[RMDB]
RNA sequence: GGGAACGACUCGAGUAGAGUCGAAAACAAGUGCGUAUUCGUCUGCCCCGACAAGGUCAGCGAGGACAAACGAAACGUCUUGCGGGCCUACGGCGCUGAGGUGGUGGUGUGCCCGACGGCGGUGCCGCCACCCCACGCUAUUCGUAGCGUGGGGUGGAAAAGAAACAACAACAACAAC
Reactivity to 2A3 in 0.01 (KOAc 150mM, MgCl2 10mM, bicine 150mM(pH8.5), 24C), signal-to-noise 8, nucleotides 027 to 126: c050a040a030g050u080g110c040g040u070a250u070u080c040g040u000c040u030g030c000c000c000c000g060a090c070a100a050g070g040u090c050a030g020c030g060a100g010g080a040c020a030a120a020c090g090a040a060a020c040g020u000c010u000u040g000c020g010g000g020c000c020u030a030c050g040g000c020g000c070u070g010a070g070g050u100g000g060u040g000g070u050g090u160g060c000c010c030g060a060c010g020g050c040g000g030u080g020c010c000g000
Reactivity to DMS in 0.01 (KOAc 150mM, MgCl2 10mM, bicine 150mM(pH8.5), 24C), signal-to-noise 3, nucleotides 027 to 126: c050a050a080g000u030g010c060g030u010a080u020u030c030g030u010c070u010g000c020c010c020c040g020a100c120a090a060g000g030u020c050a050g020c030g020a060g000g000a040c010a040a110a080c100g000a080a060a090c090g000u000c000u010u010g000c020g000g000g010c010c020u000a120c060g000g000c040g000c050u000g000a060g010g000u030g000g030u000g030g030u030g020u020g010c040c050c090g030a070c150g010g030c020g010g030u010g000c000c030g000